[RMDB]
RNA sequence: GGGAACGACUCGAGUAGAGUCGAAAACCCACUAGAUUCGUCUAGUGGGAAAAAGCGUACUACUUUAGGGAGCUGCGAGCUACCCACCUCCCAAAUAGGAGAGGCUCCCAGCUUUGAUCUAAAGUAUCGCAAAAACUCGAUGUUUCGACAUCGAGAAUGAAUUUUCCAGAUUCGUCUGGAAAAUUCAAAAAGAAACAACAACAACAAC
Reactivity to 2A3 in 0.01 (KOAc 150mM, MgCl2 10mM, bicine 150mM(pH8.5), 24C), signal-to-noise 1, nucleotides 027 to 156: c000c000c000a000c000u000a000g000a000u050u020c210g020u000c150u000a000g010u000g000g000g070a070a030a020a070a050g050c080g000u050a110c050u000a000c010u070u010u000a010g040g000g020a000g010c020u030g000c010g010a010g000c000u010a080c050c090c070a090c010c010u100c000c000c070a220a300a300u270a090g020g000a020g000a000g000g000c010u030c100c300c000a000g000c000u210u140u060g090a050u010c000u000a000a000a000g000u000a030u280c000g000c000a120a080a000a080a080c020u000c000g000a000u040g000u030u180u110c160g080a010c000a000u000c000g000a010g000a000a060
This 207-nucleotide RNA was probed chemically with 2A3. The 2A3 profile rests on 666 reads. It was measured as part of the RMDB library RNAMAK.